[RMDB]
RNA sequence: GGGAACGACUCGAGUAGAGUCGAAAAUGGGGCGACACCCCUCCAUAAGGCUGACUCAGAGCGGCUAGCCGCCGGUGAGUUGCAUUCACUAUGCAGAAGCCGCAACGCGAUUUUAUGGGACGCGAAAGGGAUGCAGUAGCUUCGGUUAUUGCAUCCCAAAAGAAACAACAACAACAAC
Reactivity to 2A3 in 0.01 (KOAc 150mM, MgCl2 10mM, bicine 150mM(pH8.5), 24C), signal-to-noise 9, nucleotides 027 to 126: u070g000g000g000g000c040g050a020c010a070c030c010c010c000u010c000c010a030u030a070a030g030g000c010u010g030a040c010u010c060a010g030a040g120c000g010g000c000u030a060g080c030c030g010c010c010g070g020u050g010a040g030u070u130g020c010a010u040u050c040a010c070u080a030u120g000c000a010g030a130a000g000c000c000g020c010a020a020c020g000c000g010a010u000u030u050u050a070u100g040g010g030a010c020g010c010g050a110a040a040
Reactivity to DMS in 0.01 (KOAc 150mM, MgCl2 10mM, bicine 150mM(pH8.5), 24C), signal-to-noise 9, nucleotides 027 to 126: u020g010g000g010g010c090g000a140c230a180c020c010c010c020u010c010c010a040u010a050a080g000g010c020u010g010a050c040u010c040a090g010a280g010c020g010g010c020u010a130g010c050c040g000c010c110g000g010u010g010a030g010u020u030g000c090a060u020u010c150a070c100u010a060u010g000c010a060g010a140a070g010c000c000g000c090a090a110c060g010c020g000a090u010u010u010u010a040u010g000g000g000a070c050g000c030g010a090a100a120